[RMDB]
RNA sequence: GGGAACGACUCGAGUAGAGUCGAAAAGCUGCUGCGUGAUAACGUGUACGGCACGAUUGAUGAAGAUGCCGAGCGCCGCGAUUUCACCAUCAAUGCCAUGUAUUACAACAUUGCCGACUACAGCAUAUGCUUUUAAUCGUUUCGACGAUUAAAAGCAAAAAGAAACAACAACAACAAC
Reactivity to 2A3 in 0.01 (KOAc 150mM, MgCl2 10mM, bicine 150mM(pH8.5), 24C), signal-to-noise 3, nucleotides 027 to 126: g040c030u030g000c010u020g000c000g020u020g050a070u040a260a040c030g010u050g020u100a060c040g000g000c000a000c030g050a070u040u300g080a120u110g040a080a070g080a100u040g020c020c000g040a050g010c040g000c020c020g010c020g010a020u000u070u020c080a070c020c010a020u040c030a010a100u060g000c010c030a030u080g030u050a060u090u180a070c080a160a020c020a040u010u050g030c000c020g040a080c040u100a050c060a010g020c030a040u080a070
Reactivity to DMS in 0.01 (KOAc 150mM, MgCl2 10mM, bicine 150mM(pH8.5), 24C), signal-to-noise 4, nucleotides 027 to 126: g000c050u000g000c040u010g000c060g030u000g010a080u010a100a100c070g010u000g020u010a110c020g000g030c010a040c070g010a200u010u010g020a130u020g010a090a110g000a150u000g020c000c010g020a160g010c070g000c050c040g010c040g000a140u020u000u010c040a060c020c020a050u000c050a040a100u000g010c030c060a070u000g010u000a060u000u000a070c120a060a090c060a060u010u000g020c040c050g010a110c080u020a070c070a080g010c040a080u000a100